Chemical mapping of a 177-nucleotide RNA with DMS and 2A3. The data come from the RNA Mapping Database (RMDB), library OK2TRN.
RNA sequence: GGGAACGACUCGAGUAGAGUCGAAAAGUAACAUUAUGGUGGUGUCAUGACAACUCCAUAUGGAGAUGUACACAGAUGGGGUUUAUACACCCGCAUCAAGGGAGAAGAAUACAGCUAGGCGAUGGGAAUGCGUAUCAGCAUUCGUGCUGAUACGCAUAAAAGAAACAACAACAACAAC
Reactivity to DMS in 0.01 (KOAc 150mM, MgCl2 10mM, bicine 150mM(pH8.5), 24C), signal-to-noise 2, nucleotides 027 to 126: g020u000a050a100c110a080u000u000a040u010g010g010u000g000g020u000g000u000c060a120u020g000a040c030a030a080c000u020c000c000a130u000a100u010g000g000a100g020a060u000g000u000a080c080a050c180a080g010a020u000g000g000g000g010u000u000u000a140u000a090c180a080c010c010c030g020c010a020u000c050a090a100g010g010g020a060g010a080a090g000a070a100u010a080c050a090g040c030u000a100g000g000c010g010a040u000g020g010g000a130
Reactivity to 2A3 in 0.01 (KOAc 150mM, MgCl2 10mM, bicine 150mM(pH8.5), 24C), signal-to-noise 1, nucleotides 027 to 126: g030u050a100a030c030a110u190u060a050u210g030g010u000g010g010u010g080u030c090a070u070g070a000c010a000a000c020u000c000c010a040u090a110u300g060g000a050g010a090u100g060u070a110c100a010c000a050g010a010u000g000g000g000g050u000u080u050a050u060a040c070a030c050c020c060g020c020a010u000c030a040a000g020g000g010a140g020a130a010g020a090a000u200a070c000a000g030c020u030a010g030g050c000g060a040u050g010g000g030a050